[RMDB]
RNA sequence: GGGAACGACUCGAGUAGAGUCGAAAAGCGUACUACAGUCGACGAUCGUACGAGAGUACGAUAAGUGUUUCCCAAAUAGGAAACACUUUUGACGUAUGGUGUACGGGAGACUGUAUCGCAAAAGUUUCUUAUCUUGCUUCGGCAAGAUAAGAAACAAGUUGCGUAAUGCGUUCGCGCAUUACGCAACAAAAGAAACAACAACAACAAC
Reactivity to 2A3 in 0.01 (KOAc 150mM, MgCl2 10mM, bicine 150mM(pH8.5), 24C), signal-to-noise 2, nucleotides 027 to 156: g010c010g040u120a120c060u020a000c020a000g000u000c010g060a300c030g010a080u020c010g000u000a000c030g020a050g020a020g300u010a000c010g000a030u040a020a000g010u010g000u000u020u000c000c000c030a180a280a050u300a080g000g000a000a000a000c000a000c000u040u000u050u080g210a100c020g000u000a000u120g110g030u130g000u140a000c000g000g000g000a020g000a000c010u030g020u020a020u300c010g000c040a020a010a040a070g010u010u000u000c000u000u000a000u000c000u000u010g000c000u000u050c190g090g010c000a000a000g000a010u000a000a000g000a010a000a000c000a000a010
Reactivity to DMS in 0.01 (KOAc 150mM, MgCl2 10mM, bicine 150mM(pH8.5), 24C), signal-to-noise 2, nucleotides 027 to 156: g030c020g080u000a050c010u000a030c010a020g020u000c000g050a140c110g000a060u000c000g020u010a020c000g030a300g020a300g030u000a000c000g020a150u000a000a000g020u020g000u010u010u010c000c000c030a080a090a290u000a020g010g030a030a030a010c000a000c000u000u000u010u000g020a150c100g030u010a010u000g000g030u020g020u000a020c000g030g000g010a150g020a070c020u000g030u000a000u010c010g010c050a070a090a120a070g000u000u000u000c000u000u000a010u000c000u020u010g010c010u000u010c300g030g000c000a030a010g000a000u000a000a000g010a020a000a000c000a100a060
The record gives the reactivity of an RNA of 207 nucleotides to 2A3 and DMS. For 2A3 the reverse transcriptase was SuperScript II with manganese. The DMS profile rests on 3,070 reads. Source: RMDB library RNAMAK, as collected in RNAgym. The reactions ran in a buffer of 150 mM KOAc, 10 mM MgCl2 and 150 mM bicine (pH 8.5), at 24 C.